Overview
Chemical mapping of a 177-nucleotide RNA with 2A3 and DMS.

RNA sequence: GGGAACGACUCGAGUAGAGUCGAAAAAGUGGUAAAGAGCAUUGGAACGUCGGAGAAACUACUCCCAAGAAGGAAAAAAGAGAAAGCAAGAAUCGGACGAGUUCCCCAAGACGCUGGGAACGUCUCGCGUUUAUACCUACUUCGGUAGGUAUAAACGAAAAGAAACAACAACAACAAC
Reactivity to 2A3 in 0.01 (KOAc 150mM, MgCl2 10mM, bicine 150mM(pH8.5), 24C), signal-to-noise 1, nucleotides 027 to 126: a000g050u080g040g020u030a060a050a070g050a020g000c040a030u000u090g000g030a130a030c020g040u050c010g090g040a050g030a060a090a020c010u100a070c010u070c000c020c040a040a040g080a020a060g000g080a070a090a030a000a050a000g040a010g000a050a030a000g040c020a020a000g000a090a050u090c020g000g060a020c010g000a010g050u010u030c000c000c010c040a010a050g130a050c040g000c050u030g010g000g070a020a010c010g010u020c050u000c010g050
Reactivity to DMS in 0.01 (KOAc 150mM, MgCl2 10mM, bicine 150mM(pH8.5), 24C), signal-to-noise 2, nucleotides 027 to 126: a080g030u020g000g020u000a020a090a140g010a070g020c060a090u010u010g020g010a120a070c070g030u000c050g020g000a060g000a090a050a090c120u010a150c080u010c020c030c050a060a090g030a070a080g000g000a000a020a070a040a070a060g000a060g020a010a010a090g020c080a050a050g010a080a070u000c090g000g020a040c040g000a220g000u000u000c010c000c000c180a090a080g010a030c080g000c060u020g020g010g010a060a180c020g010u000c000u010c130g000
The 2A3 profile rests on 1,191 reads. DMS adducts were read by reverse transcription with MarathonRT. The reactions ran in a buffer of 150 mM KOAc, 10 mM MgCl2 and 150 mM bicine (pH 8.5), at 24 C.